[RMDB]
RNA sequence: GGGAACGACUCGAGUAGAGUCGAAAAGGUAGGGCAUUCGUGCCCUACCACACCUCUAAGCAGAUUGGCGAGGACGACGUCGCGGCCCACGUUUACCAACUACUACUCUCUCCUUCGGGAGAGAGAACGUGAGCUGAAAGUUCGCUUUCAGCUCACGAAAAGAAACAACAACAACAAC
Reactivity to DMS in 0.01 (KOAc 150mM, MgCl2 10mM, bicine 150mM(pH8.5), 24C), signal-to-noise 1, nucleotides 027 to 126: g020g000u000a030g000g010g000c000a060u000u010c170g020u020g000c000c010c000u000a000c000c020a060c170a040c050c010u000c090u010a210a150g000c130a080g010a010u000u030g010g010c000g020a080g000g000a090c090g020a040c030g030u020c070g000c050g000g010c000c000c000a090c030g000u000u000u070a130c030c020a090a080c140u010a040c110u010a240c020u000c000u000c000u020c000c000u010u000c150g010g000g010a010g020a000g010a010g010a040a030
Reactivity to 2A3 in 0.01 (KOAc 150mM, MgCl2 10mM, bicine 150mM(pH8.5), 24C), signal-to-noise 2, nucleotides 027 to 126: g000g000u010a000g000g000g040c020a010u040u090c200g110u060g000c000c000c000u010a000c000c000a000c000a000c000c000u000c010u050a100a090g060c060a020g060a300u100u160g100g020c020g040a040g040g000a050c070g020a010c020g020u050c010g000c030g030g080c000c010c010a030c040g000u010u070u010a170c060c020a060a070c050u170a100c020u060a080c020u020c000u000c010u000c000c000u030u030c140g040g000g000a000g000a000g000a000g000a000a010